[RMDB]
An RNA of 177 nucleotides, treated with DMS and 2A3 and read out base by base. High 2A3 reactivity points to a flexible backbone, as in loops and unpaired stretches. Conditions: 150 mM KOAc, 10 mM MgCl2 and 150 mM bicine (pH 8.5), 24 C. For DMS the reverse transcriptase was MarathonRT. For 2A3, 690 sequencing reads were counted.
RNA sequence: GGGAACGACUCGAGUAGAGUCGAAAAAAGAGGGAGAAUACGAUGCGGAUAGACCACAGACCAAGGUGGGCUUUGGCUGUGGCAGGGGUCUUGGGCAGAGCCAGAGCAUCUGAGCUGCUCCAUAAUCACCCAGACUAUUCUUCGGAAUAGUCUGGGUAAAAGAAACAACAACAACAAC
Reactivity to DMS in 0.01 (KOAc 150mM, MgCl2 10mM, bicine 150mM(pH8.5), 24C), signal-to-noise 1, nucleotides 027 to 126: a050a080g020a130g010g020g020a070g010a110a050u000a160c180g000a040u000g040c070g000g000a120u020a080g000a100c000c010a030c010a030g010a170c000c000a000a000g020g030u000g000g010g040c030u010u010u010g010g010c030u000g000u000g000g000c060a110g030g000g010g000u000c080u000u000g010g020g000c070a090g010a090g020c090c040a110g010a140g010c080a020u000c020u000g000a150g010c120u020g010c010u000c010c110a090u010a040a130u000c120
Reactivity to 2A3 in 0.01 (KOAc 150mM, MgCl2 10mM, bicine 150mM(pH8.5), 24C), signal-to-noise 1, nucleotides 027 to 126: a000a000g160a120g040g020g000a080g040a110a000u080a050c100g020a010u040g010c050g050g040a060u050a020g090a050c000c010a000c020a010g150a200c050c010a030a040g070g000u100g100g190g040c020u040u030u030g010g030c000u040g000u050g000g040c010a000g040g020g000g010u080c000u170u110g010g050g000c000a030g000a000g050c050c040a030g020a010g020c050a060u100c060u000g000a010g070c030u050g000c010u050c020c000a090u270a050a080u110c070